An RNA of 207 nucleotides, treated with 2A3 and read out base by base. For 2A3, 344 sequencing reads were counted. The reactions ran in a buffer of 150 mM KOAc, 10 mM MgCl2 and 150 mM bicine (pH 8.5), at 24 C. Values cover nucleotides 27 to 156. Values are in units of 0.01, from 0 to 300, in steps of 10.

RNA sequence: GGGAACGACUCGAGUAGAGUCGAAAAUUUUGUGUGCGAGUGUAAGAGUAAUUAAAACUCUGACGCGUAUUGAAAGAAAGAAUACUCCAAAAGAUCGUAACUACGGUUACCUUCUGUAAGGAGUGCCCGAAUCAUGAGAACUCUGUUUCGAAAGGAUCUCGGAUAAAGAGUUCGCUCUUUAUCCGAGAAAAGAAACAACAACAACAAC
Reactivity to 2A3 in 0.01 (KOAc 150mM, MgCl2 10mM, bicine 150mM(pH8.5), 24C), signal-to-noise 1, nucleotides 027 to 156: u080u080u030u190g100u010g000u000g000c000g000a040g030u060g030u090a030a000g000a010g030u080a070a300u220u250a040a130a130a090c000u010c000u000g000a000c000g000c010g000u100a000u110u250g130a130a080a050g030a060a060a000g000a090a000u070a100c000u000c000c000a050a050a000a050g000a010u000c000g000u000a010a010c010u010a000c150g010g030u000u010a000c000c000u000u000c000u000g000u020a070a220g000g000a000g020u000g010c000c000c150g080a000a040u150c120a120u100g040a030g040a190a030c030u100c090u260g000u000u000u000c090g060a200a070a030g080g110a040u100